[RMDB]
RNA sequence: GGGAACGACUCGAGUAGAGUCGAAAAAGUAGAUAUGGCGGGGGCCCAUACCACAUUAUGCUCGAACUAAUUCCAUUUUCGUGACAAACUUCCGCCCGAAAUGAGUUUAGUUAAACACAUAAUUGAACGUCAGCAAAAUAUUCGUAUUUUGCUGACGAAAAGAAACAACAACAACAAC
Reactivity to DMS in 0.01 (KOAc 150mM, MgCl2 10mM, bicine 150mM(pH8.5), 24C), signal-to-noise 1, nucleotides 027 to 126: a010g000u000a120g000a150u060a050u000g000g020c070g000g020g000g000g000c070c000c010a060u000a060c100c120a020c140a090u010u030a030u020g000c090u030c200g000a080a010c000u010a120a090u030u030c060c030a040u000u000u040u010c060g020u000g000a040c070a010a040a060c110u000u000c120c070g090c000c040c020g000a010a010a020u000g000a080g000u000u000u000a190g000u000u060a070a090a050c220a090c050a010u020a060a060u020u000g000a100a260
Reactivity to 2A3 in 0.01 (KOAc 150mM, MgCl2 10mM, bicine 150mM(pH8.5), 24C), signal-to-noise 3, nucleotides 027 to 126: a000g160u170a040g020a160u060a040u130g020g000c020g020g000g000g050g080c020c000c000a040u040a060c020c030a010c000a050u030u060a020u060g020c020u040c100g040a020a020c020u000a040a090u080u000c020c000a010u090u100u050u080c000g010u050g100a080c100a060a220a050c050u170u010c030c030g000c000c040c010g010a010a000a130u090g010a060g040u020u000u010a050g000u020u090a070a120a000c060a000c010a050u060a110a070u080u090g040a130a010
The record gives the reactivity of an RNA of 177 nucleotides to DMS and 2A3.
For 2A3 the reverse transcriptase was SuperScript II with manganese.
The data come from the RNA Mapping Database (RMDB), library OK1LIB.